[RMDB]
RNA sequence: GGGAACGACUCGAGUAGAGUCGAAAAAAAACAACAAUAACGUGUAGUAUUGUUUUAUUCAAUCAUUCAGAAUUGGUAAAUGCAGAAGCAGCAAAAUAACCAAAAGUAAUGACUUUCGUUUUAAUUUCCAUCUACUAAGGUUCGCCUUAGUAGAUGGAAAAGAAACAACAACAACAAC
Reactivity to 2A3 in 0.01 (KOAc 150mM, MgCl2 10mM, bicine 150mM(pH8.5), 24C), signal-to-noise 1, nucleotides 027 to 126: a000a000a000a000c070a000a000c090a000a050u100a070a050c050g120u220g140u290a260g020u000a050u020u020g020u020u150u000u000a050u120u100c030a040a060u000c000a030u000u000c000a050g240a300a260u020u020g000g000u020a000a020a020u070g000c050a000g100a300a050g120c070a000g020c000a070a000a120a300u030a020a070c030c030a020a020a020a020g100u090a020a020u050g000a030c070u030u190u240c220g020u000u000u030u030a100a190u000u070u000
An RNA of 177 nucleotides, treated with 2A3 and read out base by base. The reactions ran in a buffer of 150 mM KOAc, 10 mM MgCl2 and 150 mM bicine (pH 8.5), at 24 C.